[RMDB]
RNA sequence: GGGAACGACUCGAGUAGAGUCGAAAAGCACGUCCGGUAAGGCCCGUGCGAACACUUGAGCUCCGGAUUGGCCGCUCUUGUGGAUUAGGACGUUCUAGCUCCGGCUUGGCCGCUAGUUCGUCCGAAAGCUAGCCGGGUGAUUCGUCACCCGGCUAGCAAAAGAAACAACAACAACAAC
Reactivity to 2A3 in 0.01 (KOAc 150mM, MgCl2 10mM, bicine 150mM(pH8.5), 24C), signal-to-noise 2, nucleotides 027 to 126: g030c000a000c010g090u050c000c000g040g270u300a180a140g050g010c070c000c000g000u000g000c000g000a130a000c010a000c010u000u010g000a000g000c010u010c030c000g260g160a300u180u260g120g010c000c000g000c010u000c000u030u060g040u010g000g010a000u020u210a010g000g000a010c000g010u060u000c000u000a000g000c050u060c050c020g040g090c130u170u180g190g010c000c050g000c070u010a000g030u000u000c020g000u000c000c000g020a000a000a000

Background: Chemical mapping of a 177-nucleotide RNA with 2A3. The data come from the RNA Mapping Database (RMDB), library OK1LIB. For 2A3 the reverse transcriptase was SuperScript II with manganese. The 2A3 profile rests on 575 reads.